This 177-nucleotide RNA was probed chemically with DMS and 2A3.
The RNA was probed in 150 mM KOAc, 10 mM MgCl2 and 150 mM bicine (pH 8.5) at 24 C.
For DMS the reverse transcriptase was MarathonRT.
For DMS, 137,434 sequencing reads were counted.
[RMDB]
RNA sequence: GGGAACGACUCGAGUAGAGUCGAAAAGGAUCCUUAACAGUCAGUAAGGUAACUUUGUCAUGUAAAGUUACUAGAGACUGGACCUAAUGUCAUUUACCUUACUGAUGACAUUGUCUAUUAAGGAUCGCUACAAGUGUGUAUUCGUACAUACUUGUAGAAAAGAAACAACAACAACAAC
Reactivity to DMS in 0.01 (KOAc 150mM, MgCl2 10mM, bicine 150mM(pH8.5), 24C), signal-to-noise 9, nucleotides 027 to 126: g010g000a000u000c000c000u000u000a020a290c140a040g010u000c000a040g010u010a260a140g000g000u000a000a010c060u000u000u000g010u010c280a120u010g010u010a010a020a010g000u000u000a020c060u000a100g000a120g000a010c010u000g000g000a050c160c300u010a040a010u000g000u000c000a000u000u000u010a070c160c170u010u010a070c190u000g000a010u000g000a020c020a020u000u000g000u000c040u000a150u000u000a010a010g010g000a010u000c000g000
Reactivity to 2A3 in 0.01 (KOAc 150mM, MgCl2 10mM, bicine 150mM(pH8.5), 24C), signal-to-noise 9, nucleotides 027 to 126: g030g000a000u000c000c000u010u010a030a010c010a010g010u010c000a020g050u070a120a020g030g000u000a010a010c020u040u040u050g080u150c110a110u160g110u210a000a010a020g000u010u010a040c020u050a030g010a020g000a070c000u010g010g020a000c000c030u090a040a010u010g000u000c010a010u010u030u140a140c030c040u110u130a100c080u090g020a010u010g010a000c010a040u050u060g020u000c050u070a110u050u030a040a010g000g000a000u000c000g000